[RMDB]
RNA sequence: GGGAACGACUCGAGUAGAGUCGAAAACUCGAAAGAGACCUGCAUAUCUUAGGCAGAUGAUCAAGUCUCGUCUGAAAAGCGAAAGCCCUAAGAUAUGCAGCUGUGAGGACUUGUCGCAGAAAAUAAAAAAUAGCUGGAUGUUCGCAUCCAGCUAUUUAAAAGAAACAACAACAACAAC
Reactivity to DMS in 0.01 (KOAc 150mM, MgCl2 10mM, bicine 150mM(pH8.5), 24C), signal-to-noise 3, nucleotides 027 to 126: c000u000c010g000a110a070a130g020a030g010a190c300c000u000g020c000a010u000a000u030c000u000u020a000g020g010c000a020g040a000u000g010a050u030c010a010a050g020u010c060u020c010g010u000c000u000g000a150a080a150a140g000c020g000a150a120a110g000c020c010c000u010a000a000g020a030u000a010u000g000c000a000g020c020u000g000u000g000a040g030g020a010c020u000u000g020u000c010g000c000a010g000a170a040a080a110u060a000a050a140
Reactivity to 2A3 in 0.01 (KOAc 150mM, MgCl2 10mM, bicine 150mM(pH8.5), 24C), signal-to-noise 4, nucleotides 027 to 126: c000u000c010g030a020a040a000g080a010g050a060c020c000u010g000c000a000u000a000u000c010u000u000a000g000g010c000a000g000a000u000g000a000u030c010a000a000g010u000c000u000c020g070u000c020u030g130a300a240a120a000g010c030g050a060a020a010g020c010c000c000u000a000a000g010a000u000a000u000g000c000a000g010c010u000g000u000g010a020g030g020a000c000u010u000g010u010c010g000c010a000g080a030a110a020a020u250a030a050a020